[RMDB]
RNA sequence: GGGAACGACUCGAGUAGAGUCGAAAACUCUUGUUAUGUGAAAGUUGAUGGUCGCCGUGUCAGUCCAUGCCUUUGAAAACAGUUCUAUGUAGUAGGGAGUCGAGAACCUAUGAGAGUUAGAACUUGCUAUGCCUUGGACUCUUCGGAGUCCAAGGAACGUUAAUUUGAUGUUCGCAUCAAAUUAACGAAAAGAAACAACAACAACAAC
Reactivity to DMS in 0.01 (KOAc 150mM, MgCl2 10mM, bicine 150mM(pH8.5), 24C), signal-to-noise 6, nucleotides 027 to 156: c030u000c020u000u000g010u000u010a090u000g010u000g000a070a070a090g020u000u000g020a120u010g020g020u000c020g040c020c030g030u000g010u000c030a100g010u010c040c050a070u000g010c020c020u000u000u000g010a110a070a040a080c050a040g010u000u000c010u000a050u000g020u000a290g010u000a030g000g020g000a120g030u010c160g020a250g010a110a110c020c010u000a020u000g000a240g020a170g000u000u000a020g010a020a050c030u000u010g030c020u000a070u010g020c000c000u000u000g000g010a020c010u000c000u000u000c300g050g000a030g020u000c000c000a000a000g000g010a010a020
Reactivity to 2A3 in 0.01 (KOAc 150mM, MgCl2 10mM, bicine 150mM(pH8.5), 24C), signal-to-noise 4, nucleotides 027 to 156: c010u010c000u030u070g060u070u100a130u100g080u030g080a140a100a090g020u050u060g040a050u060g020g040u040c020g000c020c030g050u020g050u050c040a010g030u000c030c010a040u070g050c000c020u110u090u110g100a070a070a020a010c010a000g000u000u010c020u020a030u080g050u040a040g010u010a010g030g020g040a040g060u040c030g040a030g040a150a030c000c010u000a010u050g050a100g000a020g080u050u040a010g000a020a010c000u000u040g010c000u060a050u150g040c000c000u000u000g010g000a010c000u000c000u010u020c120g080g000a000g000u000c000c000a000a000g000g000a000a000
This 207-nucleotide RNA was probed chemically with DMS and 2A3. DMS adducts were read by reverse transcription with MarathonRT. The reactions ran in a buffer of 150 mM KOAc, 10 mM MgCl2 and 150 mM bicine (pH 8.5), at 24 C. The data come from the RNA Mapping Database (RMDB), library M2RFPK. For 2A3, 4,186 sequencing reads were counted.